[RMDB]
RNA sequence: GGGAACGACUCGAGUAGAGUCGAAAAAGCUGAUCUCUAGAUCUAGGAUCCAUGGCACGACCAUGACUAGACAUGGGUACUAGAUGACGUACCAUGUCGGAUCGGAUCGUACGUCAUGCUCAUGAGCUGCUGCUAGUUGAUUCGUCAACUAGCAGCAAAAAGAAACAACAACAACAAC
Reactivity to DMS in 0.01 (KOAc 150mM, MgCl2 10mM, bicine 150mM(pH8.5), 24C), signal-to-noise 4, nucleotides 027 to 126: a060g010c030u020g010a010u010c010u010c090u000a090g010a080u010c040u010a070g040g010a030u010c040c010a020u000g000g010c040a140c160g010a100c020c010a060u000g010a090c060u000a090g010a030c000a010u010g000g010g020u000a030c060u000a130g000a120u000g010a080c140g020u000a030c010c020a010u000g010u010c020g010g010a090u000c030g000g020a040u000c070g010u010a040c170g010u000c000a030u000g010c050u000c070a130u010g000a110g020c100
Reactivity to 2A3 in 0.01 (KOAc 150mM, MgCl2 10mM, bicine 150mM(pH8.5), 24C), signal-to-noise 4, nucleotides 027 to 126: a000g040c040u040g010a050u020c070u000c030u080a070g020a220u050c040u060a060g030g120a030u000c050c000a000u010g010g000c060a010c210g110a160c020c010a060u100g040a040c060u090a060g030a020c000a010u020g160g000g070u030a020c030u050a080g240a300u140g050a050c040g000u010a000c020c000a020u070g020u070c050g000g040a110u080c020g000g020a090u020c000g020u060a050c040g000u000c000a030u100g020c010u050c040a100u220g050a030g040c040
An RNA of 177 nucleotides, treated with DMS and 2A3 and read out base by base. It was measured as part of the RMDB library OK2TRN. For DMS the reverse transcriptase was MarathonRT. 2A3 adducts were read by reverse transcription with SuperScript II with manganese. The reactions ran in a buffer of 150 mM KOAc, 10 mM MgCl2 and 150 mM bicine (pH 8.5), at 24 C.